[RMDB]
RNA sequence: GGGAACGACUCGAGUAGAGUCGAAAACAAACUAUGGAAUUUGUCAACACCUUUUCUUGGGACCAAGGAAGCAAAGUCAGUGGAUACCGUGUCCUGUAGACAUGUCACUUGUGAUAAGGCACGGACACAUUACCUUCCUCUUCGGAGGAAGGUAAUGAAAAGAAACAACAACAACAAC
Reactivity to DMS in 0.01 (KOAc 150mM, MgCl2 10mM, bicine 150mM(pH8.5), 24C), signal-to-noise 5, nucleotides 027 to 126: c050a080a080a080c110u020a090u010g000g010a100a090u010u000u000g000u000c040a110a100c100a090c060c020u000u000u000u010c030u010u000g000g000g010a090c140c040a040a090g000g010a060a060g010c100a040a060a070g010u000c080a070g020u000g000g010a130u000a110c030c030g020u000g000u010c010c020u000g020u000a150g010a050c050a050u010g000u010c100a030c120u010u000g020u000g010a040u000a070a050g010g000c010a010c030g010g010a110c170a100
Reactivity to 2A3 in 0.01 (KOAc 150mM, MgCl2 10mM, bicine 150mM(pH8.5), 24C), signal-to-noise 5, nucleotides 027 to 126: c010a010a060a000c050u140a160u190g100g030a070a100u060u050u050g030u040c020a010a050c010a110c050c000u030u030u060u080c030u050u080g060g030g030a040c090c020a000a040g050g020a040a000g040c060a060a030a020g060u060c060a010g010u050g030g110a090u060a160c010c010g000u010g010u060c000c000u050g060u040a060g020a100c010a020u080g060u100c040a070c190u080u090g020u040g050a080u040a090a000g000g010c020a000c010g000g010a010c010a000